Overview:
The record gives the reactivity of an RNA of 177 nucleotides to DMS and 2A3.
RNA sequence: GGGAACGACUCGAGUAGAGUCGAAAAGAUAUGGAGUUGAAGCACGAGGUAUUAAUUCUCAAUGGAACAAUCGGAAACGAUUGUUCCAUUGAGUUAUAAUACUACCCACCGUGCCAACUCCUAAGUCCACGGUAGUAAUGUUCGCAUUACUACCGUGAAAAGAAACAACAACAACAAC
Reactivity to DMS in 0.01 (KOAc 150mM, MgCl2 10mM, bicine 150mM(pH8.5), 24C), signal-to-noise 4, nucleotides 027 to 126: g020a100u020a300u010g020g010a020g010u010u000g010a250a250g010c010a020c010g010a150g020g000u000a000u000u000a020a300u030u000c000u010c000a010a000u000g000g000a030a000c010a010a000u010c020g010g000a100a120a230c000g010a010u000u000g000u010u000c000c000a000u000u000g020a020g030u000u000a050u000a020a020u000a010c040u000a070c080c050c180a300c150c010g000u000g000c000c010a000a000c010u000c000c000u000a020a060g010u000c060
Reactivity to 2A3 in 0.01 (KOAc 150mM, MgCl2 10mM, bicine 150mM(pH8.5), 24C), signal-to-noise 2, nucleotides 027 to 126: g050a010u110a050u240g000g010a000g010u020u030g070a300a070g010c000a000c000g020a040g050g030u010a010u020u070a110a300u280u040c020u030c000a000a010u000g010g000a010a000c000a000a020u000c010g020g070a150a080a010c000g000a010u030u000g000u000u020c010c000a000u020u000g000a010g000u000u000a000u020a000a000u010a010c000u000a010c020c050c010a090c050c000g000u000g000c000c000a000a000c000u020c040c000u020a090a020g030u110c020

Source information
2A3 adducts were read by reverse transcription with SuperScript II with manganese.